This 177-nucleotide RNA was probed chemically with 2A3 and DMS. DMS adducts were read by reverse transcription with MarathonRT. Source: RMDB library TTRDEL, as collected in RNAgym. The reactions ran in a buffer of 150 mM KOAc, 10 mM MgCl2 and 150 mM bicine (pH 8.5), at 24 C. For 2A3, 2,153 sequencing reads were counted.
[RMDB]
RNA sequence: GGGAACGACUCGAGUAGAGUCGAAAAGAUAUGGAAAUGAGAACAGCUUUUGACGCCUGAUCGGAAACGAUUCAGGCGAUAAGCUGACAUUUCCUAAGUCAAAUCAUGUAGCUUCGGCUACAUGAAAGGUGUCAACAUACUUCGGUAUGUUGACACCAAAAGAAACAACAACAACAAC
Reactivity to 2A3 in 0.01 (KOAc 150mM, MgCl2 10mM, bicine 150mM(pH8.5), 24C), signal-to-noise 2, nucleotides 027 to 126: g010a020u020a020u040g000g040a010a000a000u070g020a200g130a300a110c000a020g000c000u170u130u130u170g180a060c030g000c010c010u010g000a010u000c000g000g000a030a010a010c020g010a030u240u200c000a000g000g020c000g000a000u000a000a020g000c000u010g010a000c010a000u000u000u020c010c000u000a080a000g060u050c040a030a020a140u000c000a010u000g000u020a000g000c000u030u060c300g100g050c000u020a010c000a010u010g040a020a010a000
Reactivity to DMS in 0.01 (KOAc 150mM, MgCl2 10mM, bicine 150mM(pH8.5), 24C), signal-to-noise 2, nucleotides 027 to 126: g000a050u000a290u000g000g000a010a010a000u000g010a150g040a130a170c000a000g000c000u000u020u010u000g030a200c020g000c000c000u000g000a060u030c000g010g010a080a010a130c020g000a030u020u010c000a010g010g020c000g020a030u000a000a020g010c010u000g010a220c000a000u000u000u000c000c000u000a050a080g000u000c000a060a160a160u000c020a000u010g000u000a000g010c020u010u020c240g030g000c000u000a000c000a000u000g000a000a040a030